[RMDB]
RNA sequence: GGGAACGACUCGAGUAGAGUCGAAAAUUAGGGGGUGAUGCCUAUGCUUGAAUGUAUAGUUUUACUCCUGGAAAGGAGCUAGACUUGUCUGUGUUUGAAGCACUUACGCUGAUGAUCGCUUUUGCGAAACAGGUGAGAGAUUCGUCUCUCACCUGUUAAAAGAAACAACAACAACAAC
Reactivity to 2A3 in 0.01 (KOAc 150mM, MgCl2 10mM, bicine 150mM(pH8.5), 24C), signal-to-noise 4, nucleotides 027 to 126: u140u090a060g070g000g000g020g000u010g020a020u010g020c010c030u010a030u030g000c040u130u150g160a150a050u130g060u040a020u010a080g000u030u000u030u030a000c000u000c000c000u000g020g030a140a040a030g050g010a000g010c050u060a030g050a170c030u030u080g010u100c110u030g060u000g050u060u040u130g120a110a010g050c030a030c040u050u090a050c060g030c040u020g020a100u120g010a030u060c000g010c030u070u070u140u300g050c040g030a010
Reactivity to DMS in 0.01 (KOAc 150mM, MgCl2 10mM, bicine 150mM(pH8.5), 24C), signal-to-noise 5, nucleotides 027 to 126: u020u030a120g010g010g000g000g020u000g000a030u010g000c120c020u000a040u000g000c020u000u010g010a130a070u000g030u000a030u010a010g010u010u000u000u000a100c000u000c000c000u000g000g020a090a120a040g000g000a030g010c060u000a040g000a040c060u010u000g000u000c060u000g010u010g000u010u000u020g010a090a090g010c030a100c120u020u030a070c140g000c030u010g000a100u010g000a090u000c020g000c010u000u010u020u020g020c030g000a090
Structure probing data (2A3 and DMS) for a 177-nucleotide construct. The data come from the RNA Mapping Database (RMDB), libraries RFM100 and RFMREP. Conditions: 150 mM KOAc, 10 mM MgCl2 and 150 mM bicine (pH 8.5), 24 C. 2A3 adducts were read by reverse transcription with SuperScript II with manganese.